[RMDB]
RNA sequence: GGGAACGACUCGAGUAGAGUCGAAAAUACGCCAAUUUCGAUUGGCGUAACACGCAAACCGGCCGAAAGGCAUUUUAUGCGUACGGAGGCGAAAGCCUAAAAACGCACUGUCAUUCGUGACAGUGAAGUAUCCAUAACCCUUCGGGGUUAUGGAUACAAAAGAAACAACAACAACAAC
Reactivity to DMS in 0.01 (KOAc 150mM, MgCl2 10mM, bicine 150mM(pH8.5), 24C), signal-to-noise 2, nucleotides 027 to 126: u000a000c000g010c010c000a010a010u000u000u010c200g040a060u000u010g000g010c020g020u000a000a040c120a040c000g000c030a030a030a100c210c210g010g000c010c010g020a110a090a130g000g020c010a010u010u010u000u000a080u010g000c000g010u010a070c230g000g010a010g020g010c000g020a090a070a160g020c010c000u000a000a020a060a070a080c220g010c000a000c010u000g000u010c010a030u000u040c180g010u000g010a000c010a000g000u000g000a010a050
Reactivity to 2A3 in 0.01 (KOAc 150mM, MgCl2 10mM, bicine 150mM(pH8.5), 24C), signal-to-noise 3, nucleotides 027 to 126: u040a010c010g000c000c010a020a000u030u080u130c200g160a010u000u000g000g000c000g000u000a010a050c020a000c000g010c000a000a010a040c010c010g070g010c020c000g050a100a020a010g020g010c000a000u020u030u010u030a040u020g050c010g000u020a060c110g250g050a010g000g000c010g030a050a010a010g010c000c000u090a120a060a020a000a010c080g000c020a010c000u000g000u000c010a030u040u090c210g110u030g000a000c000a000g010u000g000a030a010